[RMDB]
RNA sequence: GGGAACGACUCGAGUAGAGUCGAAAAAUUUUGAGGAUAAUUGAUCAUAUUGGGCAUGAUGAAACCCACACCCUUACCGCUCCUAGUAGGAGCAAUGAGUCCAAUAAACGCCUGUCCUGCGUAAGCGCUACCAGGGAACAUUCGUGUUCCCUGGUAGAAAAGAAACAACAACAACAAC
Reactivity to 2A3 in 0.01 (KOAc 150mM, MgCl2 10mM, bicine 150mM(pH8.5), 24C), signal-to-noise 2, nucleotides 027 to 126: a000u120u190u090u130g050a060g020g000a010u080a150a060u240u090g040a000u050c060a020u030a080u110u110g020g040g000c040a020u110g020a040u040g070a120a040a050c000c000c000a020c010a000c000c030c020u000u080a090c030c100g030c020u000c000c000u040a130g110u200a040g130g020a000g010c010a000a000u030g010a010g010u000c000c000a010a010u050a060a060a030c070g000c000c020u070g020u060c020c000u030g000c020g040u040a160a010g060c020g020
Reactivity to DMS in 0.01 (KOAc 150mM, MgCl2 10mM, bicine 150mM(pH8.5), 24C), signal-to-noise 3, nucleotides 027 to 126: a070u010u010u010u000g000a270g020g010a110u000a040a080u010u000g020a090u000c060a070u000a150u000u000g010g010g040c050a060u010g010a100u000g000a050a090a090c050c040c020a100c110a080c020c030c030u010u010a170c180c160g020c010u000c000c020u010a150g020u000a210g000g020a000g020c030a030a020u010g000a100g000u000c040c040a000a050u010a040a080a100c090g020c040c040u000g030u000c010c020u000g010c060g010u010a080a070g000c140g020